[RMDB]
Annotation
The record gives the reactivity of an RNA of 177 nucleotides to 2A3 and DMS. Reactivities are given for positions 27 through 126. It was measured as part of the RMDB library TTRDES. For 2A3 the reverse transcriptase was SuperScript II with manganese. The RNA was probed in 150 mM KOAc, 10 mM MgCl2 and 150 mM bicine (pH 8.5) at 24 C.
RNA sequence: GGGAACGACUCGAGUAGAGUCGAAAAGAUAUGGAUCCCAUGAAGGCUUGGACCCUACCUCGGAAACGAGGUAGGCUAGCCUACAUGUGGAUCCUAAGUCAAAAGUCCCAAGCUUCGGCUUGGGACAGGUAAGAACCAGGUUCGCCUGGUUCUUACCAAAAGAAACAACAACAACAAC
Reactivity to 2A3 in 0.01 (KOAc 150mM, MgCl2 10mM, bicine 150mM(pH8.5), 24C), signal-to-noise 2, nucleotides 027 to 126: g020a000u030a020u150g000g000a000u030c010c000c010a000u010g040a060a030g070g000c150u260u280g170g120a240c000c040c000u000a000c000c000u020c010g000g000a040a060a060c000g000a020g000g010u010a000g000g000c000u000a000g010c000c010u020a010c000a000u070g080u300g060g010a000u020c000c000u000a010a000g040u030c060a000a000a130a220g010u020c000c000c010a000a010g000c000u070u300c300g160g000c000u000u010g050g000g000a000c000a000
Reactivity to DMS in 0.01 (KOAc 150mM, MgCl2 10mM, bicine 150mM(pH8.5), 24C), signal-to-noise 2, nucleotides 027 to 126: g020a080u010a300u010g010g010a020u010c000c000c010a000u000g010a210a070g000g000c000u010u010g040g000a140c300c020c000u000a000c000c000u000c000g010g000a120a090a180c000g000a000g020g000u000a000g020g000c030u010a000g020c000c000u000a060c010a000u030g010u030g060g000a000u000c000c000u000a010a120g000u010c050a110a110a180a130g000u000c000c000c000a020a010g000c000u000u010c250g050g000c000u000u000g000g010g000a000c020a000